[RMDB]
RNA sequence: GGGAACGACUCGAGUAGAGUCGAAAACUAAGAAUGUGGCUAUGGGACUGUCGCCAUGUACACACUGAAGAUGUUCCCUAAGCAUGUGGCCAAGGGACGGACGCCAUGGACACUGGGAAGACGUUCAAGGUGGUGGAUCGUUCGCGAUCCACCACCUAAAAGAAACAACAACAACAAC
Reactivity to 2A3 in 0.01 (KOAc 150mM, MgCl2 10mM, bicine 150mM(pH8.5), 24C), signal-to-noise 1, nucleotides 027 to 126: c020u070a160a060g180a070a190u210g000u000g000g010c050u140a050u010g050g000g000a010c150u200g000u000c000g000c060c010a000u060g120u030a060c070a000c000a000c160u010g080a070a020g060a220u080g070u100u000c000c000c000u000a020a000g000c110a120u180g000u000g010g060c000c030a050a140g010g010g000a000c010g010g000a000c100g040c030c000a000u080g000g000a000c040a070c040u010g010g010g010a010a010g090a040c050g020u040u000c050a020
Conditions: 150 mM KOAc, 10 mM MgCl2 and 150 mM bicine (pH 8.5), 24 C. The record gives the reactivity of an RNA of 177 nucleotides to 2A3. High 2A3 reactivity points to a flexible backbone, as in loops and unpaired stretches. Reactivities are given for positions 27 through 126. For 2A3, 421 sequencing reads were counted.